[RMDB]
RNA sequence: GGGAACGACUCGAGUAGAGUCGAAAAAAUUUCUAGGAAACUAGCAGGUGGCCAACCGCCCGGGCCACCGUUACUCCACUCCACUCCUAAGGGAGUGGUUUGGAGGAACAUAACAGGGCAAAUGAAACAUUAUUGGUGUGUUCGCACACCAAUAAUGAAAAGAAACAACAACAACAAC
Reactivity to 2A3 in 0.01 (KOAc 150mM, MgCl2 10mM, bicine 150mM(pH8.5), 24C), signal-to-noise 1, nucleotides 027 to 126: a000a010u140u130u000c020u030a030g020g020a080a060a060c000u000a020g040c130a220g060g000u000g000g000c030c020a060a070c080c060g000c000c000c000g000g010g000c000c000a000c000c000g020u000u010a010c000u000c010c010a000c000u000c000c000a000c000u000c010c000u040a120a130g170g000g000a010g000u020g000g010u000u000u000g000g000a000g000g000a010a000c000a060u150a070a020c050a080g000g000g030c000a030a020a010u060g010a020a050a000
Reactivity to DMS in 0.01 (KOAc 150mM, MgCl2 10mM, bicine 150mM(pH8.5), 24C), signal-to-noise 3, nucleotides 027 to 126: a070a050u010u000u010c000u000a020g000g000a230a110a220c010u000a000g020c300a090g040g010u000g000g030c000c000a050a070c160c190g000c000c000c020g020g000g010c010c000a010c010c010g000u000u000a030c000u000c010c000a010c010u000c000c000a010c010u000c000c000u010a100a090g040g000g000a020g000u000g000g000u000u000u000g000g000a010g000g000a020a010c020a070u000a060a070c200a060g000g020g040c030a070a060a070u000g010a130a080a140